[RMDB]
RNA sequence: GGGAACGACUCGAGUAGAGUCGAAAAGGCCGGCGUCGGUGCGGCGGCCACCGCGGCCACCAGAUCGGCGGGUUGCGGCAGCUGGAUCUGCGGGAGCGUGAGCGGUUGCGCGGACAGCGCCUGCAGGCGUGCUUCGGUAGUUCGCUACCGAAGCACGAAAAGAAACAACAACAACAAC
Reactivity to 2A3 in 0.01 (KOAc 150mM, MgCl2 10mM, bicine 150mM(pH8.5), 24C), signal-to-noise 2, nucleotides 027 to 126: g060g000c000c020g030g080c010g010u160c110g070g070u180g100c020g060g030c000g000g040c010c000a050c000c110g010c050g060g000c000c010a000c020c020a060g070a300u120c080g020g000c140g040g030g000u030u000g010c000g010g000c000a000g000c000u090g130g000a110u020c000u010g000c010g000g030g000a010g080c020g010u060g040a060g020c060g030g090u200u160g170c050g000c000g030g060a010c020a050g010c000g000c000c010u020g020c060a000g100g000
Reactivity to DMS in 0.01 (KOAc 150mM, MgCl2 10mM, bicine 150mM(pH8.5), 24C), signal-to-noise 1, nucleotides 027 to 126: g000g020c000c000g040g000c000g010u010c040g000g000u020g010c130g070g040c040g000g000c000c000a030c070c020g030c080g000g000c000c000a240c010c000a080g000a020u090c060g040g050c110g000g010g000u000u030g030c040g020g000c130a110g010c020u010g000g010a240u080c020u000g020c070g010g000g000a050g010c000g000u000g000a100g030c050g020g030u060u070g000c020g020c000g010g000a150c060a110g000c010g000c000c000u000g000c040a030g000g010

Source: RMDB library OK1LIB, as collected in RNAgym. This 177-nucleotide RNA was probed chemically with 2A3 and DMS. The DMS profile rests on 1,799 reads. DMS adducts were read by reverse transcription with MarathonRT. The RNA was probed in 150 mM KOAc, 10 mM MgCl2 and 150 mM bicine (pH 8.5) at 24 C.